This 177-nucleotide RNA was probed chemically with 2A3. 2A3 adducts were read by reverse transcription with SuperScript II with manganese. The 2A3 profile rests on 4,682 reads. The data come from the RNA Mapping Database (RMDB), library OK1LIB.
[RMDB]
RNA sequence: GGGAACGACUCGAGUAGAGUCGAAAAGCACGUCGUUACGACGACGUGCAAGAAAACAAAAGGAGUGGUGAUGUCCGACCACAAUGAAUCAAACGGACAAAAAGCAUGGUGGUACGCCACCAUGCAACCUCACUCAGGAGUUCGCUCCUGAGUGAGGAAAAGAAACAACAACAACAAC
Reactivity to 2A3 in 0.01 (KOAc 150mM, MgCl2 10mM, bicine 150mM(pH8.5), 24C), signal-to-noise 3, nucleotides 027 to 126: g000c000a000c000g020u000c000g020u020u090a050c230g050a010c000g000a000c000g110u000g000c000a000a000g010a000a010a000a030c160a030a100a060a060g240g020a140g070u020g000g000u020g050a190u070g050u000c000c020g000a010c010c000a000c030a010a150u270g080a010a030u140c060a070a010a020c040g000g000a020c070a020a040a020a020a000g000c000a000u000g000g000u010g000g000u040a000c280g050c030c000a010c000c000a000u000g000c000a000a000